[RMDB]
An RNA of 177 nucleotides, treated with DMS and 2A3 and read out base by base. The data come from the RNA Mapping Database (RMDB), library M2PK90. For DMS the reverse transcriptase was MarathonRT. The RNA was probed in 150 mM KOAc, 10 mM MgCl2 and 150 mM bicine (pH 8.5) at 24 C. For 2A3 the reverse transcriptase was SuperScript II with manganese.
RNA sequence: GGGAACGACUCGAGUAGAGUCGAAAAGAAAAUCCCAAGCAUAGCAUAGCAUAGCAUAGCAUAGCAUAGCAUAGCAUAGCAUAGCAUAGCAUAGCAUUGCAUAGCAUAGCAUAGCAUACAAAAAAAACUCUUUAAAUUGAUUCGUCAAUUUAAAGAGAAAAGAAACAACAACAACAAC
Reactivity to DMS in 0.01 (KOAc 150mM, MgCl2 10mM, bicine 150mM(pH8.5), 24C), signal-to-noise 2, nucleotides 027 to 126: g000a140a110a170a220u010c020c020c010a090a160g000c070a040u000a110g010c030a040u000a060g010c020a030u000a070g020c020a010u000a150g000c050a020u010a090g010c030a040u000a110g010c040a070u000a080g030c020a030u020a040g000c050a030u010a060g030c020a060u000a070g020c070a050u000a070g020c040a160u020u000g010c040a040u000a080g000c050a040u000a070g010c000a040u000a050g010c030a050u020a050c060a000a000a000a080a090a080a060a150
Reactivity to 2A3 in 0.01 (KOAc 150mM, MgCl2 10mM, bicine 150mM(pH8.5), 24C), signal-to-noise 2, nucleotides 027 to 126: g050a000a100a010a050u000c020c000c000a010a000g070c030a040u140a030g000c020a030u070a030g020c010a030u010a040g000c000a010u060a040g000c010a030u040a030g030c020a020u080a020g010c040a030u030a030g010c010a050u060a030g020c020a060u050a020g000c010a030u050a030g010c020a030u070a070g000c020a030u000u050g000c010a020u090a020g000c000a020u070a030g000c010a030u020a080g000c030a030u100a090c080a040a060a020a010a010a000a060a090